Structure probing data (DMS and 2A3) for a 177-nucleotide construct. The DMS profile rests on 1,501 reads. In probing experiments dimethyl sulfate is read out at A N1 and C N3, which are open when not base-paired.
[RMDB]
RNA sequence: GGGAACGACUCGAGUAGAGUCGAAAAGAUAUGGAUCAUACAGGCUUUUGACGUAUACUCGGAAACGAGUAUGACGAUAAGCCUGGUGAUCCUAAGUCAAACCGUACGAUGUUCGCAUCGUACGGAAGCUACUACUUCGGUUCGCCGAAGUAGUAGCAAAAGAAACAACAACAACAAC
Reactivity to DMS in 0.01 (KOAc 150mM, MgCl2 10mM, bicine 150mM(pH8.5), 24C), signal-to-noise 1, nucleotides 027 to 126: g000a040u000a160u010g000g000a000u000c000a010u000a170c000a010g000g000c000u000u000u000u000g010a230c140g030u000a020u000a000c000u000c000g030g000a040a070a090c000g000a000g000u000a000u000g010a010c010g020a180u000a000a050g020c000c000u010g000g040u000g010a000u000c000c000u010a040a030g020u000c040a080a090a160c000c000g020u000a000c010g000a010u000g020u010u030c230g030c030a000u000c000g000u050a000c000g000g030a010a020
Reactivity to 2A3 in 0.01 (KOAc 150mM, MgCl2 10mM, bicine 150mM(pH8.5), 24C), signal-to-noise 3, nucleotides 027 to 126: g000a020u030a010u100g000g000a000u010c010a020u280a300c010a060g000g000c030u130u210u300u300g200a030c000g020u040a000u010a000c000u000c010g030g000a030a010a000c000g010a010g020u010a000u020g070a000c010g070a080u070a300a010g000c000c010u000g000g000u020g010a010u000c000c000u000a040a000g040u000c030a070a040a110c010c000g000u000a020c000g000a020u020g040u050u120c300g000c180a010u000c000g020u010a000c020g000g000a010a010

The RNA was probed in 150 mM KOAc, 10 mM MgCl2 and 150 mM bicine (pH 8.5) at 24 C. DMS adducts were read by reverse transcription with MarathonRT.